[RMDB]
RNA sequence: GGGAACGACUCGAGUAGAGUCGAAAAUCAGAGAAACCCUAGAAUUUUAAAUGGGCAAUCCUGAGCCAAAUCCUUCUUUCCGAAAACAAAAAACUAAAAGUUCAGAAAAAAAGGAUAGGUGCAGAGAAAUGUCUAACGAAUUCGUUCGUUAGACAUUAAAAGAAACAACAACAACAAC
Reactivity to DMS in 0.01 (KOAc 150mM, MgCl2 10mM, bicine 150mM(pH8.5), 24C), signal-to-noise 2, nucleotides 027 to 126: u010c030a110g010a180g000a180a230a200c020c000c000u000a250g010a220a110u000u010u040u030a020a140a140u030g010g000g030c030a060a080u020c020c010u000g000a150g010c000c000a070a150a130u000c000c000u020u000c170u000u000u010c010c060g010a010a060a090a080c040a000a120a120a170a100a100c160u020a040a060a070a120g000u000u000c000a170g010a000a000a000a030a110a080a000g000g020a010u000a080g000g040u000g000c100a020g010a080g010a100
Reactivity to 2A3 in 0.01 (KOAc 150mM, MgCl2 10mM, bicine 150mM(pH8.5), 24C), signal-to-noise 3, nucleotides 027 to 126: u010c010a020g020a000g200a210a300a300c030c000c050u070a080g130a300a240u090u180u180u270a090a180a070u080g020g000g000c000a010a060u000c010c000u000g000a000g000c000c000a040a070a130u020c000c030u000u010c030u020u000u000c010c020g100a050a080a110a020c120a020a180a060a070a020a010c070u180a090a050a030a070g030u000u040c040a000g030a010a050a010a000a010a000a010g020g000a000u000a010g000g010u020g020c050a020g060a000g010a130